Description: This 207-nucleotide RNA was probed chemically with 2A3. The data come from the RNA Mapping Database (RMDB), library OK3TST. 2A3 adducts were read by reverse transcription with SuperScript II with manganese. Conditions: 150 mM KOAc, 10 mM MgCl2 and 150 mM bicine (pH 8.5), 24 C.
RNA sequence: GGGAACGACUCGAGUAGAGUCGAAAACACAAAUAUGUGUCCCAUUCAACAUUUCUGGUACACAUAUUUGGCACAUGUGACAUAUGCUAUAUGGACAGGCAAGUGUGAUGGCAAAUAUAUACCAGUCAUGGAAUGCCCGUGCUCAGCAAAUACCUAAACGCCACUGAUUAUUCGUAAUCAGUGGCGUAAAAGAAACAACAACAACAAC
Reactivity to 2A3 in 0.01 (KOAc 150mM, MgCl2 10mM, bicine 150mM(pH8.5), 24C), signal-to-noise 3, nucleotides 027 to 156: c120a000c010a010a000a000u010a000u010g010u000g000u020c040c000c020a050u180u150c110a120a300c100a150u090u210u100c060u070g000g000u000a010c010a020c000a010u010a010u040u010u040g010g010c050a030c010a140u190g100u110g090a030c040a070u140a090u140g070c020u080a010u030a060u250g060g020a010c040a040g030g040c010a040a090g080u080g010u030g100a060u010g000g000c030a010a130a000u150a040u020a010u000a070c030c000a040g120u060c020a050u040g050g110a130a050u050g040c000c000c010g020u040g050c010u040c080a000g010c040a010a050a130u130a060c010c080u200a200a110